[RMDB]
An RNA of 177 nucleotides, treated with DMS and 2A3 and read out base by base. Values cover nucleotides 27 to 126. It was measured as part of the RMDB library OK2TST. For DMS, 1,701 sequencing reads were counted. DMS adducts were read by reverse transcription with MarathonRT.

RNA sequence: GGGAACGACUCGAGUAGAGUCGAAAACUAUGUGACAGACGCCGACUCCCACCUGCUGGGUGUGAUCGCCUUUCGCGCCCUGGUGCUGGCCAAUCCCGAACAGCGAGUCCGUGAGCUGAUGGGUGACGCUCGCGUAAAAUUUCGAUUUUACGCGAGCAAAAGAAACAACAACAACAAC
Reactivity to DMS in 0.01 (KOAc 150mM, MgCl2 10mM, bicine 150mM(pH8.5), 24C), signal-to-noise 2, nucleotides 027 to 126: c060u010a080u020g000u000g040a120c070a050g010a070c110g000c070c050g000a130c090u000c010c040c000a120c060c060u010g000c130u000g000g000g040u000g020u000g010a080u010c120g000c060c060u000u000u000c040g010c040g010c040c010c050u000g000g030u000g000c060u000g010g000c050c080a050a140u010c010c010c000g000a070a080c100a060g000c010g010a130g010u010c040c060g020u010g000a110g020c020u000g020a120u000g010g000g020u000g000a180c200
Reactivity to 2A3 in 0.01 (KOAc 150mM, MgCl2 10mM, bicine 150mM(pH8.5), 24C), signal-to-noise 1, nucleotides 027 to 126: c010u020a070u240g110u040g040a000c010a130g070a030c010g030c000c020g080a030c030u050c080c020c010a020c000c020u090g010c050u060g060g000g050u030g070u020g030a040u090c040g060c050c000u050u040u040c050g000c010g030c020c000c000u030g000g000u100g000c020u020g000g000c000c030a010a020u070c010c010c010g000a110a040c000a010g040c030g060a060g070u020c050c000g070u040g000a000g000c030u030g000a110u120g030g020g020u050g030a020c100